[RMDB]
Chemical mapping of a 207-nucleotide RNA with 2A3 and DMS.
The RNA was probed in 150 mM KOAc, 10 mM MgCl2 and 150 mM bicine (pH 8.5) at 24 C.
Reactivities are rounded to 0.1 and cut off at 0 and 3.
The 2A3 profile rests on 1,412 reads.
Values cover nucleotides 27 to 156.
For 2A3 the reverse transcriptase was SuperScript II with manganese.
The DMS profile rests on 4,410 reads.

RNA sequence: GGGAACGACUCGAGUAGAGUCGAAAAGGACUCCGUGAGGAGUCCGUGCACCGAGAGGUGCACAAGGGCGAAGUAUGUCUCGGUGCCCCUCCUCCUCGAUGUUGAGAGGAGGAGAGAUGUCGUCUCACGAUUUAUAGUGAGACUGACUUGAGACAGGAUAAUACAUCUCAUUCGUGAGAUGUAUUAUAAAAGAAACAACAACAACAAC
Reactivity to 2A3 in 0.01 (KOAc 150mM, MgCl2 10mM, bicine 150mM(pH8.5), 24C), signal-to-noise 1, nucleotides 027 to 156: g000g000a010c000u000c000c000g010u010g000a020g000g000a010g000u000c000c000g000u000g000c000a010c010c000g010a010g020a010g000g000u000g000c000a000c020a010a030g020g000g000c010g060a070a020g080u150a040u030g010u000c000u000c000g000g050u090g000c000c000c010c000u010c020c000u000c000c000u000c000g020a030u060g040u140u080g050a070g000a000g000g000a000g000g000a000g000a000g000a030u020g000u010c000g000u000c000u010c000a000c010g040a030u000u190u040a170u120a040g000u000g000a000g000a000c040u040g000a000c000u000u060g000a000g000a000c000a000g000g010
Reactivity to DMS in 0.01 (KOAc 150mM, MgCl2 10mM, bicine 150mM(pH8.5), 24C), signal-to-noise 2, nucleotides 027 to 156: g000g010a010c010u000c000c000g020u010g000a230g040g020a050g050u000c000c020g100u000g020c010a010c020c000g000a300g000a300g020g020u000g000c000a010c000a040a120g020g030g000c030g010a180a160g030u010a030u000g010u000c010u030c020g010g010u000g030c000c000c010c020u000c000c000u010c010c000u000c010g020a220u010g020u010u010g000a300g010a050g020g020a030g000g000a000g000a020g000a130u000g020u000c030g010u000c000u000c010a010c030g000a290u010u000u000a120u010a150g000u000g010a040g010a030c020u010g030a010c000u000u010g010a040g000a070c000a090g000g010